This 177-nucleotide RNA was probed chemically with DMS and 2A3.
For DMS the reverse transcriptase was MarathonRT.
2A3 adducts were read by reverse transcription with SuperScript II with manganese.
The data come from the RNA Mapping Database (RMDB), library OK1LIB.
The reactions ran in a buffer of 150 mM KOAc, 10 mM MgCl2 and 150 mM bicine (pH 8.5), at 24 C.
RNA sequence: GGGAACGACUCGAGUAGAGUCGAAAAGGACUGCACCAUAGAUUCUGUCCUAGUCAUUGGUGAUGUAACUCAGGGCGGGUUUCAUGAGCCCAACGUUGACAGCACUCUCAAUUCCGAGGGCAACGAAAUACAUGAGCCCUUUCGAGGGCUCAUGUAUAAAAGAAACAACAACAACAAC
Reactivity to DMS in 0.01 (KOAc 150mM, MgCl2 10mM, bicine 150mM(pH8.5), 24C), signal-to-noise 2, nucleotides 027 to 126: g010g000a050c010u020g000c030a060c000c020a060u010a100g070a020u000u000c090u030g010u000c020c040u000a150g000u030c060a130u000u000g020g060u000g000a100u000g000u040a150a060c060u040c090a080g020g000g000c140g000g010g030u000u000u000c100a040u000g000a080g050c010c020c010a080a190c030g000u000u000g000a070c070a130g000c120a210c070u030c010u000c050a070a070u070u040c040c050g000a030g050g000g000c070a030a010c040g000a030a040
Reactivity to 2A3 in 0.01 (KOAc 150mM, MgCl2 10mM, bicine 150mM(pH8.5), 24C), signal-to-noise 3, nucleotides 027 to 126: g060g020a030c050u080g000c000a040c020c010a040u100a110g070a070u130u060c000u050g050u010c010c010u000a030g050u050c040a060u050u050g090g010u070g050a030u100g040u050a070a040c050u020c110a040g060g000g000c050g030g050g000u020u080u050c120a090u120g040a020g020c000c000c000a030a020c020g030u010u070g010a050c030a060g070c020a120c070u050c000u010c060a050a290u240u010c050c040g020a060g010g050g000c000a000a060c040g060a300a050